Description
The data come from the RNA Mapping Database (RMDB), library OK2TRN. Structure probing data (2A3 and DMS) for a 177-nucleotide construct. DMS adducts were read by reverse transcription with MarathonRT. The reactions ran in a buffer of 150 mM KOAc, 10 mM MgCl2 and 150 mM bicine (pH 8.5), at 24 C.
RNA sequence: GGGAACGACUCGAGUAGAGUCGAAAACUUGGCGUUCUUUGUCCUCACACCACUUGCCCGGGAGGUGCAAUUGGUUCUUUAUGUCCCGGACUGAUGAGCCAGUGAGGUGGCACUACCCAAGGUCACACUCCUCUUGGACAUUCGUGUCCAAGAGGAGAAAAGAAACAACAACAACAAC
Reactivity to 2A3 in 0.01 (KOAc 150mM, MgCl2 10mM, bicine 150mM(pH8.5), 24C), signal-to-noise 2, nucleotides 027 to 126: c020u020u080g000g020c070g090u160u000c070u110u000u110g060u030c000c020u050c030a080c010a020c030c000a070c020u020u030g020c000c030c000g090g070g020a120g000g040u130g030c000a010a030u030u030g060g000u090u040c030u070u230u040a180u210g090u040c050c060c050g000g030a010c020u020g050a090u030g010a020g030c000c010a030g010u000g040a050g000g000u060g050g000c030a040c080u050a110c030c010c000a000a010g000g030u000c010a030c000a030
Reactivity to DMS in 0.01 (KOAc 150mM, MgCl2 10mM, bicine 150mM(pH8.5), 24C), signal-to-noise 1, nucleotides 027 to 126: c020u000u000g000g030c070g000u000u000c030u000u040u020g000u000c020c020u010c100a090c140a060c080c040a020c080u010u000g010c010c000c040g000g000g000a180g020g010u000g000c040a030a070u000u000g010g000u000u000c080u000u000u000a100u030g010u000c040c080c060g010g000a070c040u000g000a060u010g010a160g020c020c060a030g020u000g010a070g000g010u000g010g000c010a080c080u000a050c080c000c020a140a070g020g000u000c030a040c110a130